[RMDB]
RNA sequence: GGGAACGACUCGAGUAGAGUCGAAAAUAUGGACGCGGUUGCUAUUGAAUACCCGUGUAUGGCGUUGCUGACACGGACGAGCAGUGCGAUGUCGGGCGCUGUUUCAAGUCCUAGCCUGCGCUAGAGAAGUCUCACUUGCUUUCGAGCAGGUGGGGCUAAAAGAAACAACAACAACAAC
Reactivity to DMS in 0.01 (KOAc 150mM, MgCl2 10mM, bicine 150mM(pH8.5), 24C), signal-to-noise 9, nucleotides 027 to 126: u040a060u020g000g010a060c030g010c050g010g010u020u010g010c050u010a040u010u020g010a120a100u030a080c070c010c010g010u020g010u010a050u030g000g010c020g010u010u030g010c010u010g000a040c030a030c030g000g000a040c050g000a100g010c080a080g010u000g000c010g010a080u010g010u000c030g000g000g000c030g010c010u010g000u000u010u000c030a070a090g010u010c030c020u000a050g010c020c050u020g000c080g010c020u000a030g000a100g000a100
Reactivity to 2A3 in 0.01 (KOAc 150mM, MgCl2 10mM, bicine 150mM(pH8.5), 24C), signal-to-noise 8, nucleotides 027 to 126: u160a070u050g040g020a010c010g010c010g020g000u060u090g020c030u040a020u020u110g050a040a030u070a060c000c000c010g000u010g010u010a110u050g010g000c020g020u010u130g030c020u020g010a010c000a010c040g020g030a000c010g010a010g020c040a010g010u020g040c000g060a110u060g050u070c000g010g020g000c010g000c000u000g000u000u060u020c030a050a010g020u000c000c000u010a010g010c010c040u060g000c030g000c020u020a010g010a000g010a070
The record gives the reactivity of an RNA of 177 nucleotides to DMS and 2A3. Conditions: 150 mM KOAc, 10 mM MgCl2 and 150 mM bicine (pH 8.5), 24 C. 2A3 adducts were read by reverse transcription with SuperScript II with manganese. DMS adducts were read by reverse transcription with MarathonRT. For 2A3, 36,269 sequencing reads were counted. DMS (dimethyl sulfate) methylates the pairing face of unpaired adenines and cytosines. Values cover nucleotides 27 to 126. Reactivities are rounded to 0.1 and cut off at 0 and 3.